[RMDB]
The record gives the reactivity of an RNA of 207 nucleotides to 2A3 and DMS.
Reactivities are given for positions 27 through 156.
Source: RMDB library OK3TST, as collected in RNAgym.
The 2A3 profile rests on 4,818 reads.
The reactions ran in a buffer of 150 mM KOAc, 10 mM MgCl2 and 150 mM bicine (pH 8.5), at 24 C.
For DMS the reverse transcriptase was MarathonRT.
RNA sequence: GGGAACGACUCGAGUAGAGUCGAAAACGUUUCAGCUGACAGCUGCUCAAAUCAUUUAAGAAGGAGUUCUGACAUUCAUUUUCAUUGUUUUACUUUUGUCUUCCUCACUAGUGUAAACAAAAAUUUCAACCAGCAUUCAUGCCGAACCUAUACCCAAGAUAGCACUGCUAUUCGUAGCAGUGCUAUCAAAAGAAACAACAACAACAAC
Reactivity to 2A3 in 0.01 (KOAc 150mM, MgCl2 10mM, bicine 150mM(pH8.5), 24C), signal-to-noise 7, nucleotides 027 to 156: c060g000u020u040u030c020a030g010c020u040g050a060c040a030g010c020u020g030c020u030c050a110a180a110u090c050a090u100u200u220a100a080g030a030a040g040g040a030g030u100u030c050u070g070a050c020a080u040u100c020a030u070u130u090u070c070a080u060u110g040u040u050u040u080a040c020u030u060u040u050g050u040c020u070u030c020c020u020c010a030c020u040a050g040u050g050u140a060a100a010c070a030a050a060a050a080u080u160u130c050a060a050c030c000a010g020c010a040u030u110c010a010u160g020c020c000g010a010a000c010c000u050a050u050a100c000c000c010a010a010
Reactivity to DMS in 0.01 (KOAc 150mM, MgCl2 10mM, bicine 150mM(pH8.5), 24C), signal-to-noise 2, nucleotides 027 to 156: c060g010u000u000u000c020a150g000c090u000g040a070c080a140g020c030u000g020c000u000c050a050a120a110u000c030a100u000u010u010a090a120g020a150a110g010g020a130g000u020u010c050u000g010a090c060a060u000u000c080a120u000u020u000u010c040a080u000u000g020u000u000u000u000a050c020u010u000u000u010g020u000c050u000u000c050c060u020c020a080c030u000a080g030u000g040u000a030a060a110c000a000a040a060a100a120u000u000u000c050a040a120c070c010a120g010c020a140u000u000c080a100u030g040c030c040g000a050a020c020c020u000a060u000a160c000c000c000a060a300